[RMDB]
RNA sequence: GGGAACGACUCGAGUAGAGUCGAAAACGUACUUGUGGGCCAUGUCGGUGAGGUACUCGCGGAUGUGGGCGCCGUCGGCGAUGCCUUCUUCGCGGGUCCACGGCUCGUAGGGAAACGACAGCGUGAACUUAGCAAAGCAGUUCGCUGCUUUGCUAAGAAAAGAAACAACAACAACAAC
Reactivity to 2A3 in 0.01 (KOAc 150mM, MgCl2 10mM, bicine 150mM(pH8.5), 24C), signal-to-noise 2, nucleotides 027 to 126: c010g030u050a030c040u080u250g020u010g040g000g000c030c020a070u120g080u150c060g000g010u060g030a040g030g000u020a020c070u010c020g000c020g090g000a030u090g040u080g030g010g030c020g000c020c000g100u050c030g150g010c020g060a070u040g010c000c000u090u030c000u040u050c010g000c000g020g000g020u000c000c000a010c010g000g000c010u030c010g040u050a080g040g040g100a080a100a020c030g020a000c050a030g020c050g060u110g030a040a080
Reactivity to DMS in 0.01 (KOAc 150mM, MgCl2 10mM, bicine 150mM(pH8.5), 24C), signal-to-noise 3, nucleotides 027 to 126: c040g020u020a080c050u000u020g050u000g020g010g000c010c000a060u010g010u000c040g000g010u000g000a030g000g000u000a020c190u000c000g040c010g000g010a020u000g010u000g010g010g010c040g010c070c010g000u000c070g000g000c020g010a040u000g000c010c010u000u010c040u010u000c010g010c020g000g010g020u000c010c010a020c010g010g020c060u000c020g030u000a060g010g010g000a070a060a070c050g000a080c090a100g000c090g010u000g020a110a170